[RMDB]
RNA sequence: GGGAACGACUCGAGUAGAGUCGAAAAGUUAGGCAUAUUGCCCGAUGCACUUACACACGCUUGACCCACCAGCUUCGGCAAAUACAUUAAGAGGUACUGAGAACGAGGCGUACCGAAAGGGAGACUCGGCCACUAUAAUGUUCGCAUUAUAGUGGCCAAAAGAAACAACAACAACAAC
Reactivity to 2A3 in 0.01 (KOAc 150mM, MgCl2 10mM, bicine 150mM(pH8.5), 24C), signal-to-noise 6, nucleotides 027 to 126: g040u050u050a030g020g000c040a020u090a060u120u170g040c000c000c000g010a010u040g020c040a050c150u050u090a010c040a000c010a010c070g050c040u030u100g070a100c000c010c010a010c020c020a020g010c010u010u040c030g020g000c020a030a060a040u140a030c060a060u110u150a140a030g040a040g090g040u050a050c070u080g070a040g010a200a020c040g000a020g030g000c020g020u040a040c010c010g030a050a010a010g030g010g010a040g020a020c030u030c060
Reactivity to DMS in 0.01 (KOAc 150mM, MgCl2 10mM, bicine 150mM(pH8.5), 24C), signal-to-noise 6, nucleotides 027 to 126: g010u000u010a060g010g010c010a080u010a070u010u000g020c020c020c020g020a050u000g000c040a090c080u000u000a060c090a100c080a060c100g020c050u000u010g010a110c040c010c020a100c080c080a090g010c040u010u000c050g020g010c050a040a050a060u000a060c080a090u000u010a090a060g000a100g010g010u000a050c060u010g010a140g020a060a150c060g010a040g010g000c300g000u000a110c020c020g010a050a050a090g000g010g000a110g010a120c110u000c100